[RMDB]
RNA sequence: GGGAACGACUCGAGUAGAGUCGAAAAAGAUCGGCGCGCACACCGCCGAUCACGCGAACCUCGCGAGCCUGGACGCCGACGGCGUGCAGCGCGAACUGGUGCGGAACGUGCGCGCGGUGACCGACGAAAAUGCCUGAUUAUUCGUAAUCAGGCAUUUAAAAGAAACAACAACAACAAC
Reactivity to 2A3 in 0.01 (KOAc 150mM, MgCl2 10mM, bicine 150mM(pH8.5), 24C), signal-to-noise 6, nucleotides 027 to 126: a000g060a030u040c060g210g020c000g010c000g000c000a010c000a010c000c010g000c020c020g010a040u040c010a010c000g050c010g020a140a260c040c100u060c040g000c010g010a010g030c000c010u020g020g100a010c000g000c010c020g250a270c230g040g010c010g000u060g080c000a000g020c020g000c020g100a050a040c090u140g070g030u190g050c020g020g010a150a060c110g010u010g000c010g000c000g000c010g000g010u020g020a050c010c020g120a130c070g050a050
Reactivity to DMS in 0.01 (KOAc 150mM, MgCl2 10mM, bicine 150mM(pH8.5), 24C), signal-to-noise 8, nucleotides 027 to 126: a080g000a080u000c010g020g020c010g010c030g010c030a030c010a090c040c010g010c010c050g000a050u010c090a030c040g020c020g010a120a160c220c160u010c030g030c010g020a260g020c050c010u000g000g000a040c010g010c000c010g010a180c200g020g030c000g020u000g000c020a020g000c120g020c020g000a080a070c160u000g000g020u010g020c010g010g010a070a080c160g010u000g000c010g010c020g020c000g000g010u000g000a190c040c020g000a100c180g000a110